[RMDB]
RNA sequence: GGGAACGACUCGAGUAGAGUCGAAAAUGGGCAUUCUCGACAUGUUCAAGGCAGUUGGCGACGGUCCUGCCUUCUAUCGUGCUUAUCCAGUCGGGACCGAUCUACAGAAGAUUGCCGGGAAGCACCAACCGGUACUACGAUUCGUCGUAGUACCGGUAAAAGAAACAACAACAACAAC
Reactivity to 2A3 in 0.01 (KOAc 150mM, MgCl2 10mM, bicine 150mM(pH8.5), 24C), signal-to-noise 2, nucleotides 027 to 126: u070g000g020g000c100a110u050u000c040u040c040g040a040c030a070u090g030u040u090c040a020a020g060g000c010a030g040u100u090g080g030c010g010a050c010g070g000u000c010c000u000g000c000c000u050u010c070u050a100u090c040g070u060g000c020u140u100a040u070c040c070a040g020u030c020g010g000g010a010c000c010g030a140u010c020u090a070c030a070g040a080a010g040a070u000u050g000c030c020g000g000g010a020a000g000c010a020c100c020a040
Reactivity to DMS in 0.01 (KOAc 150mM, MgCl2 10mM, bicine 150mM(pH8.5), 24C), signal-to-noise 2, nucleotides 027 to 126: u000g000g020g020c090a120u000u000c010u000c030g010a060c050a080u000g010u020u010c030a100a090g000g020c080a070g000u000u000g010g030c120g020a110c100g020g010u000c030c010u000g010c030c020u030u000c090u000a040u000c150g000u000g000c080u000u000a070u020c070c060a030g010u000c020g000g000g000a080c050c010g010a080u000c040u000a200c120a090g000a070a090g000a070u010u000g010c050c010g020g010g000a000a020g000c060a090c020c090a080

The record gives the reactivity of an RNA of 177 nucleotides to 2A3 and DMS. The DMS profile rests on 1,861 reads. Conditions: 150 mM KOAc, 10 mM MgCl2 and 150 mM bicine (pH 8.5), 24 C. 2A3 adducts were read by reverse transcription with SuperScript II with manganese.